[RMDB]
Structure probing data (DMS) for a 177-nucleotide construct. For DMS the reverse transcriptase was MarathonRT. The data come from the RNA Mapping Database (RMDB), library TTRDES.
RNA sequence: GGGAACGACUCGAGUAGAGUCGAAAAGAUAUGGAUCCCAUGAUCUCCGAUAAGCUCUGUGUCGGAAACGACACGAGCUUUUGACGGAGGUGGGAUCCUAAGUCAAAUCGGAGCUUCGGCUCCGAAACACAGAGCCAUUGUUCGCAAUGGCUCUGUGAAAAGAAACAACAACAACAAC
Reactivity to DMS in 0.01 (KOAc 150mM, MgCl2 10mM, bicine 150mM(pH8.5), 24C), signal-to-noise 1, nucleotides 027 to 126: g000a020u010a100u020g010g020a020u000c000c000c010a020u010g000a160u000c000u000c000c000g020a120u040a020a010g000c000u000c000u030g080u000g010u020c000g010g000a030a020a070c000g030a050c000a000c000g000a040g010c000u000u000u010u000g030a250c080g010g000a010g050g050u000g000g000g020a010u010c000c000u020a000a030g020u000c020a130a130a140u000c000g000g000a040g020c000u010u010c250g010g000c000u000c000c020g010a000a060a140